[RMDB]
Chemical mapping of a 177-nucleotide RNA with 2A3 and DMS. For 2A3, 19,349 sequencing reads were counted. For DMS the reverse transcriptase was MarathonRT. The data come from the RNA Mapping Database (RMDB), library OK2TST. The DMS profile rests on 32,468 reads.
RNA sequence: GGGAACGACUCGAGUAGAGUCGAAAAGUACGAGCUGACCUAUCCUCACCCGCGCCGGCUCGACCUCCGAGAGGACUGGCGAGGCGCCCUCCUCGUACGCCACCGGGAUCUCUUCCUUCACCGCGAAAAUUGGAGAAUAAUUCGUUAUUCUCCAAUUAAAAGAAACAACAACAACAAC
Reactivity to 2A3 in 0.01 (KOAc 150mM, MgCl2 10mM, bicine 150mM(pH8.5), 24C), signal-to-noise 6, nucleotides 027 to 126: g040u040a020c040g020a010g010c060u040g090a100c010c020u050a090u090c010c010u030c020a050c010c010c020g020c050g020c030c020g070g030c010u030c020g100a150c030c020u040c030c050g060a070g000a020g080g030a040c050u050g020g010c020g030a060g030g010c030g040c000c020c000u000c000c000u010c010g010u020a030c020g020c010c000a030c020c000g030g010g010a040u020c030u000c000u060u040c010c000u030u050c030a050c080c030g050c030g090a100a110
Reactivity to DMS in 0.01 (KOAc 150mM, MgCl2 10mM, bicine 150mM(pH8.5), 24C), signal-to-noise 9, nucleotides 027 to 126: g020u000a070c050g000a060g010c100u000g010a100c060c060u010a110u000c030c020u000c060a100c050c040c040g010c090g020c040c020g010g010c030u000c070g000a120c070c050u000c060c050g000a130g010a160g010g010a080c070u000g010g000c030g010a080g010g000c090g000c050c030c050u000c040c010u000c020g010u000a050c060g010c030c020a080c050c030g000g000g000a060u000c040u000c040u000u000c020c020u000u000c040a080c030c040g010c100g000a060a050